Chemical mapping of a 177-nucleotide RNA with 2A3 and DMS. The RNA was probed in 150 mM KOAc, 10 mM MgCl2 and 150 mM bicine (pH 8.5) at 24 C.
RNA sequence: GGGAACGACUCGAGUAGAGUCGAAAAGUGCGAUGAGUCGAUAUGCAGAUUUUCUGCAAAUUGAAGCAUGGGAGGUCAUAACGCAGGAGCGGACCUUGAUCAGUUGUGUGAACCUGCUGAUCACACAACGUAGUAUUACAUUCGUGUAAUACUACGUAAAAGAAACAACAACAACAAC
Reactivity to 2A3 in 0.01 (KOAc 150mM, MgCl2 10mM, bicine 150mM(pH8.5), 24C), signal-to-noise 9, nucleotides 027 to 126: g040u040g010c020g040a040u030g020a030g070u020c010g010a010u010a030u080g000c000a010g050a110u110u110u130u110c000u000g000c000a000a030a010u030u040g020a030a010g020c020a020u040g050g080g010a030g010g010u020c030a070u090a270a050c050g010c040a060g050g170a080g050c030g010g010a020c000c000u010u030g010a020u020c010a020g020u040u040g070u040g060u060g130a050a080c010c000u020g000c010u010g010a010u010c000a000c000a000c000a050
Reactivity to DMS in 0.01 (KOAc 150mM, MgCl2 10mM, bicine 150mM(pH8.5), 24C), signal-to-noise 9, nucleotides 027 to 126: g020u000g010c030g010a030u000g000a050g010u000c010g010a020u000a060u000g010c000a010g000a180u020u010u020u010c000u000g000c000a010a070a030u000u000g000a040a050g010c020a020u010g010g010g010a030g000g000u000c020a150u020a070a170c060g010c030a140g010g010a140g010c040g010g000a040c020c020u000u000g000a030u000c040a050g010u000u000g010u010g010u020g010a080a140c190c050u000g000c020u000g000a050u000c000a030c060a020c050a080